[RMDB]
RNA sequence: GGGAACGACUCGAGUAGAGUCGAAAAGGAGAGUCGCUGGUUGGCUCGCUCGAUGGUGGGACUAUGCGAUUCGCAGUAUCAACAGGACCUUCCACCGCUGCCCCCACUCCAGCAGCAUUCUCCGAUAGACACUGGACCUGUUCGCAGGUCCAGUGUCAAAAGAAACAACAACAACAAC
Reactivity to 2A3 in 0.01 (KOAc 150mM, MgCl2 10mM, bicine 150mM(pH8.5), 24C), signal-to-noise 2, nucleotides 027 to 126: g040g030a050g000a010g030u050c030g000c060u000g010g000u040u030g000g030c070u010c130g030c000u070c010g090a080u070g000g000u020g000g000g010a050c020u070a120u130g010c100g120a270u060u220c140g000c030a020g060u110a030u180c050a020a090c000a030g000g080a100c000c020u000u030c000c010a020c020c030g010c040u070g000c030c020c000c040c000a050c060u040c000c000a000g000c000a000g000c040a030u030u000c000u000c000c000g000a020u020a060